[RMDB]
RNA sequence: GGGAACGACUCGAGUAGAGUCGAAAAUUAUUGAGCGUAGAUGUCUCUGUCACGAUACGAGUAAGUGACUCUCGUGUACAACUGGCGAAUGAGACAGAGACAUUAUAUGCUCGUGCCAGUCAAUAAAACCUUUCAGGGUAUUCGUACCCUGAAAGGUAAAAGAAACAACAACAACAAC
Reactivity to 2A3 in 0.01 (KOAc 150mM, MgCl2 10mM, bicine 150mM(pH8.5), 24C), signal-to-noise 2, nucleotides 027 to 126: u110u070a040u040u200g000a000g000c020g010u020a000g010a050u000g000u030c000u020c000u020g020u010c010a000c060g050a010u030a050c000g010a000g000u080a060a110g080u080g210a070c010u020c010u000c020g030u040g010u070a100c030a180a070c120u070g140g000c090g050a130a080u130g020a040g000a070c000a020g000a000g000a020c000a000u000u000a020u020a000u020g010c000u010c010g000u000g060c010c030a060g060u110c060a100a020u150a200a090a040
Reactivity to DMS in 0.01 (KOAc 150mM, MgCl2 10mM, bicine 150mM(pH8.5), 24C), signal-to-noise 2, nucleotides 027 to 126: u000u000a050u000u000g000a000g000c010g030u000a010g000a040u000g010u000c000u000c000u000g000u000c000a160c120g010a080u010a010c010g000a020g010u000a050a110g020u010g000a260c140u000c060u010c050g030u000g020u000a100c110a100a040c140u000g000g010c090g000a050a120u000g020a150g000a020c000a010g010a020g000a010c000a000u000u000a070u000a020u000g020c000u000c030g000u000g010c010c040a110g000u030c230a070a060u010a050a120a080